Structure probing data (2A3) for a 207-nucleotide construct.
The reactions ran in a buffer of 150 mM KOAc, 10 mM MgCl2 and 150 mM bicine (pH 8.5), at 24 C.
Source: RMDB library RNAMAK, as collected in RNAgym.
For 2A3, 3,122 sequencing reads were counted.

RNA sequence: GGGAACGACUCGAGUAGAGUCGAAAAGGGGUCAGCUUUGAUCAUAGAACGAGCGAGGAUCUAUACUGAAGCCUCCACGGUAUAGGGAGCUCAAUAUGGGAGCUGACGGAGGCACCCAAAAGAUGUCUUCUCUCAGUUCGCUGAGAGAAGACAUCAAGACUACACUUCCUUUCGAGGAAGUGUAGUCAAAAGAAACAACAACAACAAC
Reactivity to 2A3 in 0.01 (KOAc 150mM, MgCl2 10mM, bicine 150mM(pH8.5), 24C), signal-to-noise 3, nucleotides 027 to 156: g110g000g070g020u070c030a020g000c020u300u300u000g010a000u010c010a010u000a030g230a250a240c170g000a010g000c000g000a300g000g000a000u010c000u000a000u000a000c000u020g070a180a030g020c000c000u000c000c000a010c000g000g000u000a000u000a010g000g000g000a000g000c000u000c030a030a030u000a000u000g010g000g000a010g000c000u000g000a020c020g020g000a010g010g000c010a030c010c010c010a010a120a040a070g010a000u000g000u000c000u000u000c000u000c000u010c000a020g010u080u110c170g060c160u000g000a000g000a010g000a000a000g000a000c000a000u000c000a000a000